[RMDB]
RNA sequence: GGGAACGACUCGAGUAGAGUCGAAAAGAUAUGGACUUCAUGUCAGCGUUGAAAUCUUUCGGAAACGAAAGAUGGAGCUGGUCAUGAGAGUCCUAAGUCAAAAGGAGGAUCCUUCGGGAUCCUCCAACGGAGAUAAAAAGUUCGCUUUUUAUCUCCGAAAAGAAACAACAACAACAAC
Reactivity to 2A3 in 0.01 (KOAc 150mM, MgCl2 10mM, bicine 150mM(pH8.5), 24C), signal-to-noise 2, nucleotides 027 to 126: g050a020u070a040u120g000g000a000c000u060u000c030a000u020g020u020c030a010g050c000g280u300u060g020a010a030a020u010c000u000u000u000c020g060g030a100a050a060c020g000a030a000a000g010a000u010g020g000a020g000c020u020g090g010u210c000a000u010g010a030g080a030g100u000c000c000u020a070a000g090u010c010a030a000a070a220g000g000a030g020g000a000u010c010c020u040u150c300g080g000g000a010u020c000c000u000c000c000a010a000
Reactivity to DMS in 0.01 (KOAc 150mM, MgCl2 10mM, bicine 150mM(pH8.5), 24C), signal-to-noise 3, nucleotides 027 to 126: g020a030u010a300u020g000g000a020c020u000u000c000a020u000g000u000c000a020g020c010g010u000u020g000a140a180a020u000c000u000u000u010c000g020g000a130a160a200c010g000a010a020a010g010a000u000g000g000a090g020c010u000g000g000u010c000a000u010g010a040g000a080g010u000c000c000u000a010a100g000u000c030a080a120a170a170g000g010a040g000g000a020u000c000c000u000u010c280g020g000g010a000u000c000c000u000c000c000a010a040